This 177-nucleotide RNA was probed chemically with 2A3 and DMS. DMS adducts were read by reverse transcription with MarathonRT.

[RMDB]
RNA sequence: GGGAACGACUCGAGUAGAGUCGAAAAGCCGGAGCUGCUGAACAGGCUGGACGAGAUUGUGGUGUUCAAACAGCUGAGCACGCGCGACGCGCGCACCAUCGCGGAGCUGCUGCUCAACGAGACGCGCCGAUUCUAAGCUGUUCGCAGCUUAGAAUCGAAAAGAAACAACAACAACAAC
Reactivity to 2A3 in 0.01 (KOAc 150mM, MgCl2 10mM, bicine 150mM(pH8.5), 24C), signal-to-noise 1, nucleotides 027 to 126: g060c020c000g000g030a030g010c040u040g000c070u110g040a040a010c010a050g210g000c020u020g000g020a040c090g040a050g050a170u100u120g040u150g100g020u000g060u130u040c060a180a150a070c010a060g070c020u030g000a010g010c010a030c150g080c020g000c000g040a010c020g010c000g000c030g010c030a050c070c020a060u090c020g000c000g020g000a000g000c010u180g010c030u010g010c010u090c010a040a020c020g040a020g000a020c050g000c030g000c050
Reactivity to DMS in 0.01 (KOAc 150mM, MgCl2 10mM, bicine 150mM(pH8.5), 24C), signal-to-noise 3, nucleotides 027 to 126: g010c020c030g010g020a080g000c010u000g010c010u000g020a030a030c060a050g010g010c060u000g010g010a140c190g000a110g000a090u000u020g020u010g030g020u000g020u000u000c060a070a090a150c200a100g010c050u010g000a020g000c000a010c170g020c020g000c020g000a150c040g000c010g000c130g020c110a050c130c120a080u000c000g020c130g000g010a140g010c010u010g030c080u010g020c000u010c010a020a010c050g000a100g000a090c110g000c040g030c080

Background:
The RNA was probed in 150 mM KOAc, 10 mM MgCl2 and 150 mM bicine (pH 8.5) at 24 C. For 2A3 the reverse transcriptase was SuperScript II with manganese.